[RMDB]
RNA sequence: GGGAACGACUCGAGUAGAGUCGAAAACAAGGUCUUCGGACCUUGAAAAAAGCGUACUACCUACCACGCGUUGAAAGUUUGAACUACCAGCUCCCAAAUAGGAGCUGGCAAACUGGAGCGUGAUGGUAUCGCAAAAAACUGCGCUUCGGCGCAGUAACUUUUUACAAUCUUUCGAGAUUGUAAAAAGAAAAGAAACAACAACAACAAC
Reactivity to DMS in 0.01 (KOAc 150mM, MgCl2 10mM, bicine 150mM(pH8.5), 24C), signal-to-noise 2, nucleotides 027 to 156: c010a020a010g010g040u000c000u000u010c280g080g000a020c010c010u000u010g000a000a030a100a090a120a110g000c040g000u000a170c110u000a070c020c010u000a040c010c010a020c030g040c000g050u000u060g020a270a160a050g020u000u000u000g000a200a170c010u000a190c000c020a020g030c000u010c000c000c000a040a140a240u000a050g000g000a030g030c000u010g020g000c000a000a020a030c010u000g010g000a240g000c000g000u000g000a050u010g000g020u000a040u010c010g080c030a000a070a080a070a050a070c010u030g010c010g020c020u000u000c300g050g000c000g020c010a000g020u000a030a080
Reactivity to 2A3 in 0.01 (KOAc 150mM, MgCl2 10mM, bicine 150mM(pH8.5), 24C), signal-to-noise 2, nucleotides 027 to 156: c030a010a010g000g000u000c020u130u150c300g110g000a020c000c000u000u020g000a020a010a010a000a010a000g050c060g000u070a170c100u010a010c040c000u040a040c000c020a010c000g020c000g080u040u050g040a040a010a020g000u000u000u000g080a140a060c070u100a100c280c000a000g020c020u030c020c020c020a200a190a030u210a150g010g020a000g000c000u000g000g020c000a000a000a000c010u020g010g050a040g000c000g000u000g000a000u010g000g020u000a030u140c040g000c000a100a000a000a000a050a000c000u020g000c000g000c000u060u060c220g180g030c010g000c000a000g000u000a000a010